RNA sequence: GGGAACGACUCGAGUAGAGUCGAAAACCACGCCUAUAUACGUCCUGUCGGCGCAAGCCGACUAUGGUGAUAAACGGACGGUGUAAUAAACCCAUUGGACCCGGGGGCGGUACCCGGCGCCUCCACCCCACAUCUAGCGAUUCGUCGCUAGAUGUGGAAAAGAAACAACAACAACAAC
Reactivity to DMS in 0.01 (KOAc 150mM, MgCl2 10mM, bicine 150mM(pH8.5), 24C), signal-to-noise 1, nucleotides 027 to 126: c010c020a180c100g000c030c000u040a210u070a070u010a030c000g000u040c000c010u000g020u010c020g010g030c020g000c300a180a110g000c010c000g000a020c000u000a010u020g000g000u040g000a090u040a110a060a070c120g000g000a020c000g000g000u030g020u000a110a100u000a090a070a090c090c070c010a120u070u010g000g010a020c040c090c040g000g000g020g000g020c010g000g010u000a100c020c000c000g000g000c060g000c040c010u010c000c060a090c000c030
Reactivity to 2A3 in 0.01 (KOAc 150mM, MgCl2 10mM, bicine 150mM(pH8.5), 24C), signal-to-noise 5, nucleotides 027 to 126: c000c000a020c020g010c010c000u040a040u000a000u020a180c040g020u010c000c010u020g000u000c010g000g010c010g000c090a070a010g000c000c010g000a000c000u000a010u010g000g010u050g090a150u140a130a130a020c050g010g010a010c020g030g000u040g020u040a150a190u080a050a070a040c020c030c020a050u040u140g050g010a080c020c020c040g000g000g000g000g000c010g010g010u040a040c000c010c010g010g020c000g010c000c000u000c000c000a030c010c020